Source: RMDB library 15KLIB, as collected in RNAgym. This 170-nucleotide RNA was probed chemically with DMS and 2A3. Values cover nucleotides 27 to 129. As a SHAPE reagent, 2A3 marks flexible, mostly unpaired nucleotides at the ribose 2'-OH. 2A3 adducts were read by reverse transcription with SuperScript II with manganese.
[RMDB]
RNA sequence: GGGAACGACUCGAGUAGAGUCGAAAAGACCUGGUGUCUAUUGUGGCUCUGAUUUUAUUGACAUUGUCAGGCGGUUAGCAGUAUCACUGUUCCAGCCUAUUACUUAUUUCCAAUUGACUACCUCAUUAACGUACGAGCUUCGGCUCGUACAAAAGAAACAACAACAACAAC
Reactivity to DMS in 0.01 (KOAc 150mM, MgCl2 10mM, bicine 150mM(pH8.5), 24C), signal-to-noise 3, nucleotides 027 to 129: g110a160c050c030u050g030g020u020g010u010c010u010a000u000u000g000u040g010g030c020u000c040u010g010a040u060u000u040u020a100u040u010g010a050c090a200u120u050g050u030c090a070g000g040c200g070g000u000u000a080g040c080a020g020u010a030u070c180a120c100u060g010u010u060c120c140a120g040c020c050u080a050u000u070a040c100u050u040a020u000u070u040c040c020a030a160u120u070g020a040c070u060a060c000c000u020c080a070u000u000a070a000c100
Reactivity to 2A3 in 0.01 (KOAc 150mM, MgCl2 10mM, bicine 150mM(pH8.5), 24C), signal-to-noise 4, nucleotides 027 to 129: g080a050c000c000u010g000g000u000g010u000c000u020a280u030u030g000u000g000g020c000u000c000u000g050a100u000u030u080u060a120u050u100g030a040c060a100u010u010g010u060c000a000g000g010c030g020g000u010u040a020g010c020a000g010u080a050u300c070a040c060u010g030u050u040c030c000a050g000c000c030u050a070u070u090a040c040u050u030a040u100u090u030c020c000a040a060u100u030g010a020c000u060a080c040c030u140c030a040u070u200a120a060c060